Chemical mapping of a 177-nucleotide RNA with DMS and 2A3. The DMS profile rests on 1,602 reads. 2A3 is a SHAPE reagent: it acylates the 2'-hydroxyl of flexible nucleotides of all four kinds. Conditions: 150 mM KOAc, 10 mM MgCl2 and 150 mM bicine (pH 8.5), 24 C. Source: RMDB library OK2TRN, as collected in RNAgym. For 2A3, 878 sequencing reads were counted.
[RMDB]
RNA sequence: GGGAACGACUCGAGUAGAGUCGAAAAAACGCAGUACGCGAAAUUCAUUAUCAGUUGAAUGCAAAGCGUUAUAGCUAUGAAAAUACAGUAAAACAUUAUUCCGAUGUUUUCGGCAUUGAUUUAACUCAGAUCACUACUCAUUCGUGAGUAGUGAUCUAAAAGAAACAACAACAACAAC
Reactivity to DMS in 0.01 (KOAc 150mM, MgCl2 10mM, bicine 150mM(pH8.5), 24C), signal-to-noise 2, nucleotides 027 to 126: a030a030c110g030c010a210g030u010a070c040g010c010g000a060a090a100u000u000c020a020u000u010a130u030c230a090g050u000u000g000a050a000u000g000c150a060a100a230g000c010g000u000u000a100u010a150g010c020u010a080u010g000a150a070a050a050u010a060c030a060g000u010a000a010a010a010c010a010u000u000a100u000u000c090c050g020a050u000g000u000u000u000u000c000g000g000c110a040u000u000g000a080u010u000u000a060a050c100u030c220
Reactivity to 2A3 in 0.01 (KOAc 150mM, MgCl2 10mM, bicine 150mM(pH8.5), 24C), signal-to-noise 2, nucleotides 027 to 126: a000a020c070g000c010a040g100u070a000c010g000c010g030a150a020a020u020u030c020a020u000u270a140u300c060a070g120u070u050g020a050a050u070g030c120a080a050a050g040c000g000u000u080a180u150a100g010c000u020a020u270g120a010a070a090a010u190a070c060a040g090u200a000a010a000a000c020a000u000u040a080u270u090c010c040g020a010u000g070u070u030u030u030c020g010g000c040a010u000u110g120a070u040u260u200a050a030c040u030c060